[RMDB]
RNA sequence: GGGAACGACUCGAGUAGAGUCGAAAAGGCGCCAUGGUGGCAGUAUGAGCUAUGGCGGCAGUGGAGAGCAGGCAGCCGACCUGCCCGGACUCCAGCCGCAACGCAAUGCCGUAAGGAUCCUGCCUCUCUAAUGAGGCUGGUUCGCCAGCCUCAUUAGAAAAGAAACAACAACAACAAC
Reactivity to 2A3 in 0.01 (KOAc 150mM, MgCl2 10mM, bicine 150mM(pH8.5), 24C), signal-to-noise 7, nucleotides 027 to 126: g030g020c030g010c030c020a070u130g090g010u090g070g000c020a020g040u120a100u220g130a070g010c030u050a080u220g070g000c000g000g000c020a050g090u040g030g010a020g000a010g070c050a020g020g010c030a010g060c080c070g060a120c010c010u010g000c000c000c020g080g040a030c010u000c000c000a000g010c000c010g030c020a030a030c050g010c050a060a080u090g010c010c010g040u070a040a070g010g010a030u040c000c010u030g010c000c010u040c000u000
Reactivity to DMS in 0.01 (KOAc 150mM, MgCl2 10mM, bicine 150mM(pH8.5), 24C), signal-to-noise 3, nucleotides 027 to 126: g020g030c010g020c000c010a090u010g010g030u050g040g000c010a060g040u030a090u020g020a300g000c030u020a100u010g010g030c000g000g000c000a160g020u010g010g000a020g010a090g020c090a170g000g000c080a020g010c120c160g020a140c180c000u000g000c000c010c040g030g010a110c000u030c000c010a080g000c010c000g020c030a060a070c190g000c080a090a100u020g010c020c020g000u010a110a090g000g010a050u010c030c010u010g010c020c010u000c070u020
The record gives the reactivity of an RNA of 177 nucleotides to 2A3 and DMS. 2A3 is a SHAPE reagent: it acylates the 2'-hydroxyl of flexible nucleotides of all four kinds. The RNA was probed in 150 mM KOAc, 10 mM MgCl2 and 150 mM bicine (pH 8.5) at 24 C.